Chemical mapping of a 207-nucleotide RNA with DMS and 2A3.
Values cover nucleotides 27 to 156.
Source: RMDB library M2RFPK, as collected in RNAgym.
The reactions ran in a buffer of 150 mM KOAc, 10 mM MgCl2 and 150 mM bicine (pH 8.5), at 24 C.
DMS adducts were read by reverse transcription with MarathonRT.
Reactivities are rounded to 0.1 and cut off at 0 and 3.

RNA sequence: GGGAACGACUCGAGUAGAGUCGAAAAACAGUCAGUACGCUGACUGAGGGAAACGGGAGCCGGGCUUGGAACAAGAGCCAUCCCAAGUCCAAGGCCAAGUAGGCUCUAGUGAUGGUACGCCAUCACAAAAACUGGUCUACCUUCGGGUAGACCAGAACCUAAACUAGUAGUUCGCUACUAGUUUAGGAAAAGAAACAACAACAACAAC
Reactivity to DMS in 0.01 (KOAc 150mM, MgCl2 10mM, bicine 150mM(pH8.5), 24C), signal-to-noise 2, nucleotides 027 to 156: a110c010a010g000u010c010a040g000u010a130c290g030c010u000g000a040c000u000g000a090g000g030g000a090a100a100c020g000g010g010a140g030c010c000g020g010g010c020u010u010g030g010a050a070c060a030a160g010a090g020c060c060a300u010c000c000c020a050a100g020u000c010c020a070a110g010g000c030c050a060a060g010u000a120g040g020c030u000c020u000a130g020u010g000a040u000g020g010u000a100c300g030c040c000a010u010c020a020c010a060a050a060a110a080c010u000g000g020u000c000u000a000c000c000u000u000c300g050g000g000u000a010g000a000c000c000a000g000a030a090
Reactivity to 2A3 in 0.01 (KOAc 150mM, MgCl2 10mM, bicine 150mM(pH8.5), 24C), signal-to-noise 7, nucleotides 027 to 156: a000c000a000g000u000c000a000g000u060a040c220g020c100u000g000a000c000u010g010a110g030g050g020a070a160a120c120g050g030g030a030g030c020c030g010g000g010c010u000u010g000g010a050a040c040a160a070g010a020g040c010c010a030u050c000c000c000a000a010g000u000c010c020a110a090g050g010c030c030a110a050g060u110a090g090g000c000u000c010u030a030g010u000g000a000u000g000g010u040a040c260g030c030c000a000u010c000a000c020a010a060a010a000a000c000u000g000g000u000c000u000a000c000c000u020u060c200g090g000g000u000a000g000a000c000c000a000g000a000a000